[RMDB]
RNA sequence: GGGAACGACUCGAGUAGAGUCGAAAAGUAUGUUACGAUUAUCUGACUAGCGAUAAUCGAUGAAGGUACUCGACUUCAUCGUAACAUAGAAUUGUCAGUGCGUACUGGCUAGUCACAGUACGGCAGACUACACUCCUAGUCUGCCACUGACUAGGAGGCUACUCAGCUAGUUCGCUAGCUGAGUAGCAAAAGAAACAACAACAACAAC
Reactivity to 2A3 in 0.01 (KOAc 150mM, MgCl2 10mM, bicine 150mM(pH8.5), 24C), signal-to-noise 1, nucleotides 027 to 156: g050u040a000u010g010u000u010a020c010g000a000u060u070a080u190c100u040g000a000c000u000a000g030c020g100a050u080a130a130u260c100g030a030u080g020a050a080g110g020u120a160c080u070c150g110a090c000u040u000c000a000u030c000g020u000a000a000c010a000u060a010g110a080a150u170u110g010u000c020a000g060u000g300c040g000u000a000c000u000g000g000c000u000a000g010u060c000a000c000a000g000u000a000c010g010g000c000a000g010a000c020u050a020c090a020c030u060c010c000u000a000g020u000c010u050g100c100c040a070c040u000g000a000c000u000a000g080g000a030g040